[RMDB]
Chemical mapping of a 177-nucleotide RNA with DMS. It was measured as part of the RMDB library TTRDES.

RNA sequence: GGGAACGACUCGAGUAGAGUCGAAAAGAUAUGGAUCAGAUAGCUAGGCAGAGGGUCGGAAACGACCCUGUGCCUUGGACCUAUUCUGAUCCUAAGUCAAAGCAAUGUACGUUCGCGUACAUUGCAACAAAACCGUACACUUCGGUGUACGGUUUUGAAAAGAAACAACAACAACAAC
Reactivity to DMS in 0.01 (KOAc 150mM, MgCl2 10mM, bicine 150mM(pH8.5), 24C), signal-to-noise 3, nucleotides 027 to 126: g000a060u010a300u000g010g000a010u000c000a000g010a020u000a000g000c080u000a010g020g040c010a020g010a010g040g000g010u010c000g020g010a090a100a290c010g010a010c000c010c010u010g000u000g000c000c000u000u010g000g000a130c300c010u000a010u000u010c030u000g000a010u000c000c000u020a030a070g000u000c050a080a140a200g000c000a000a000u000g010u000a000c010g030u010u010c300g020c000g040u000a000c000a000u000u000g000c000a060a080

The DMS profile rests on 2,722 reads.